[RMDB]
RNA sequence: GGGAACGACUCGAGUAGAGUCGAAAAUGCCGGUAAUCAACGCAAGCGGCUUGAUGCAUUACUUGAACAAUUUGGUCUGGAUUCAGAUUUCACUGUAAAUGUUAAAGGUGAGCUGAUUGAAUUACGCCACGAUGAGUGUCUUCGGACACUCAUCGUGAAAAGAAACAACAACAACAAC
Reactivity to 2A3 in 0.01 (KOAc 150mM, MgCl2 10mM, bicine 150mM(pH8.5), 24C), signal-to-noise 1, nucleotides 027 to 126: u040g010c010c000g000g000u050a020a030u000c020a010a010c090g000c100a070a130g030c020g060g010c000u000u050g040a050u080g000c040a050u070u040a050c020u050u070g030a060a030c030a080a170u050u000u140g020g020u040c030u050g150g140a300u300u200c040a000g000a030u000u150u000c010a040c020u030g000u120a090a130a050u060g020u020u090a030a100a020g070g010u000g050a030g070c000u000g030a160u030u050g020a010a070u030u010a000c020g020c030
Reactivity to DMS in 0.01 (KOAc 150mM, MgCl2 10mM, bicine 150mM(pH8.5), 24C), signal-to-noise 1, nucleotides 027 to 126: u000g030c020c000g040g020u000a050a070u010c020a030a030c100g000c110a090a050g040c020g000g000c010u000u000g010a220u000g010c020a020u000u000a040c050u030u030g000a030a100c300a040a030u000u000u010g040g020u000c110u010g010g000a140u000u010c030a030g050a030u000u010u000c020a020c180u000g010u000a050a010a070u030g010u010u020a090a150a040g020g000u000g000a070g020c020u000g000a170u000u000g000a030a060u000u000a040c080g000c130